Overview
An RNA of 177 nucleotides, treated with DMS and 2A3 and read out base by base. The DMS profile rests on 36,864 reads. The data come from the RNA Mapping Database (RMDB), library OK1LIB. Conditions: 150 mM KOAc, 10 mM MgCl2 and 150 mM bicine (pH 8.5), 24 C.
RNA sequence: GGGAACGACUCGAGUAGAGUCGAAAAUAUACAUCAGAAGUCGGCACAACUCCCGACUCGCGGUGAGCGAUGCAGCGUAGCAACCGCUACGCAGCUGCUGUGCGGAUGGCUAGCAAAAGCUAGCCUACCGUAUAGUAAAUUUCGAUUUACUAUACGGAAAAGAAACAACAACAACAAC
Reactivity to DMS in 0.01 (KOAc 150mM, MgCl2 10mM, bicine 150mM(pH8.5), 24C), signal-to-noise 9, nucleotides 027 to 126: u050a100u040a150c060a050u010c020a100g010a120a040g000u000c000g000g000c210a100c090a100a130c300u020c110c000c000g000a040c060u000c020g000c300g000g010u010g000a120g010c040g000a080u020g020c030a030g010c000g010u000a010g010c000a100a120c280c300g000c010u000a000c000g010c010a010g020c010u010g000c020u010g000u020g010c060g000g000a090u020g010g000c000u000a010g000c010a120a070a110a140g010c000u000a000g000c000c000u000a020
Reactivity to 2A3 in 0.01 (KOAc 150mM, MgCl2 10mM, bicine 150mM(pH8.5), 24C), signal-to-noise 9, nucleotides 027 to 126: u160a010u030a030c050a040u080c030a020g070a150a010g090u010c010g020g080c140a040c040a300a300c130u050c010c000c000g020a020c010u010c010g010c040g010g050u110g040a030g010c020g080a090u160g020c020a010g000c010g000u010a000g000c020a080a200c160c160g000c000u000a000c000g000c000a010g000c010u040g000c010u040g040u090g040c030g060g040a060u080g010g000c000u010a000g000c020a090a130a290a070g000c000u000a000g000c000c000u010a040